This 207-nucleotide RNA was probed chemically with DMS and 2A3. Reactivities are given for positions 27 through 156. Conditions: 150 mM KOAc, 10 mM MgCl2 and 150 mM bicine (pH 8.5), 24 C. It was measured as part of the RMDB library OK3TST. The 2A3 profile rests on 992 reads.
[RMDB]
RNA sequence: GGGAACGACUCGAGUAGAGUCGAAAAGGACUGGACCAGGACCACAGGUACCGCCGGACCCAUAUAAGGUACCAACCAGAAUAAGACAGAUACACAAUGGGCAGCACAUUGUAGCCAGUCAGAACCGCGUGCCUAGUCUACGGCACGAGCGAGCUAACCCCGAAAAUAUAUUCGUAUAUUUUCGGGGAAAAGAAACAACAACAACAAC
Reactivity to DMS in 0.01 (KOAc 150mM, MgCl2 10mM, bicine 150mM(pH8.5), 24C), signal-to-noise 2, nucleotides 027 to 156: g010g010a140c030u000g000g020a190c030c060a120g030g000a250c040c020a050c040a130g020g030u000a070c000c000g030c060c080g030g020a090c020c000c040a070u000a120u020a170a080g000g010u000a050c000c000a150a070c040c040a100g020a100a150u040a030a160g010a160c010a120g030a160u010a070c030a050c040a080a080u000g020g020g020c020a100g040c030a110c060a070u000u000g040u030a110g000c000c000a080g000u000c030a130g000a070a080c040c000g000c000g030u000g000c000c010u000a250g000u020c120u000a100c050g000g000c000a050c020g000a030g000c030g050a100g000c020u010a080a250
Reactivity to 2A3 in 0.01 (KOAc 150mM, MgCl2 10mM, bicine 150mM(pH8.5), 24C), signal-to-noise 2, nucleotides 027 to 156: g040g000a020c010u030g000g030a080c050c060a100g010g100a030c020c010a050c070a100g020g020u010a010c000c010g060c020c030g000g060a080c020c020c020a000u070a040u050a060a040g020g000u020a030c000c000a050a030c070c030a050g090a170a060u080a160a020g080a100c050a000g100a130u110a130c050a010c000a070a010u040g000g090g000c030a030g020c020a040c000a030u040u070g040u000a000g020c010c010a020g000u030c030a010g040a070a030c020c010g000c000g020u000g000c030c000u100a090g110u050c050u160a070c070g000g000c000a000c000g000a000g020c020g010a030g000c030u030a030a100